[RMDB]
RNA sequence: GGGAACGACUCGAGUAGAGUCGAAAACAUGUCACGUGACAUUCUAUAGUGGAUCGGUAUACACCUAUAAUGUGACCGUGCGACGAUGAGUCGAUGAGGCAUUAAGCGUGACUCAAUGACAAGGAGCGAUUGUUACUGGAUUCGUCCAGUAAUAGUCAAAAGAAACAACAACAACAAC
Reactivity to 2A3 in 0.01 (KOAc 150mM, MgCl2 10mM, bicine 150mM(pH8.5), 24C), signal-to-noise 9, nucleotides 027 to 126: c030a040u090g000u000c000a000c020g030u050g030a010c010a040u070u000c050u060a090u040a070g070u070g080g040a070u070c060g050g010u090a100u020a120c030a010c010c010u030a020u020a110a050u040g020u010g040a060c000c000g050u030g010c000g010a010c010g030a050u160g030a010g000u000c010g010a040u050g110a070g030g000c010a010u030u060a030a010g020c010g010u010g000a010c010u010c050a070a160u150g060a070c040a070a080g140g010a070g120c080
Reactivity to DMS in 0.01 (KOAc 150mM, MgCl2 10mM, bicine 150mM(pH8.5), 24C), signal-to-noise 9, nucleotides 027 to 126: c080a090u010g010u000c000a030c050g010u000g010a130c090a040u000u000c090u000a070u010a100g020u000g010g010a090u000c080g010g010u000a080u010a080c030a030c050c050u000a070u000a050a100u000g010u000g000a060c030c020g010u000g000c010g000a030c020g000a100u010g000a260g000u000c000g010a080u000g010a090g010g000c040a060u000u000a080a170g020c080g000u000g000a030c010u000c100a050a100u000g000a050c110a080a100g000g000a100g010c210